[RMDB]
RNA sequence: GGGAACGACUCGAGUAGAGUCGAAAAAGAAAUUACGUUGUAAGGGACCUCAACCAUCUUGUGAACAUGCCAGCAGAGCAAUGUUGAGAUCAAGUCUCUACUCUUGAUACCCUCAAGAGCGCUGGGAAUGAGUGCUAAAUUUCGAUUUAGCACUCAUAAAAGAAACAACAACAACAAC
Reactivity to 2A3 in 0.01 (KOAc 150mM, MgCl2 10mM, bicine 150mM(pH8.5), 24C), signal-to-noise 3, nucleotides 027 to 126: a000g070a030a070a010u200u080a030c090g000u060u070g030u160a100a070g000g050g000a020c000c010u010c010a010a010c020c020a110u190c100u070u110g070u040g080a080a030c040a060u130g070c050c010a010g060c050a020g050a000g080c020a100a060u080g000u040u020g010a030g000a040u100c090a060a060g030u000c000u000c010u020a050c000u000c000u000u020g030a020u080a090c030c010c000u000c000a000a030g010a020g050c060g010c080u040g000g000g030a070
Reactivity to DMS in 0.01 (KOAc 150mM, MgCl2 10mM, bicine 150mM(pH8.5), 24C), signal-to-noise 6, nucleotides 027 to 126: a070g010a110a100a120u010u010a070c120g010u000u010g000u010a090a080g000g000g000a040c020c020u000c040a030a030c020c230a080u000c090u000u000g010u000g010a130a090c120a070u000g000c040c030a060g010c060a080g010a220g000c070a080a050u000g010u000u000g000a030g010a070u000c120a070a130g010u010c020u010c010u000a100c010u000c000u000u010g000a060u010a180c090c050c040u000c030a030a030g000a010g010c160g000c040u000g000g010g010a110
This 177-nucleotide RNA was probed chemically with 2A3 and DMS. Conditions: 150 mM KOAc, 10 mM MgCl2 and 150 mM bicine (pH 8.5), 24 C. For 2A3, 2,421 sequencing reads were counted.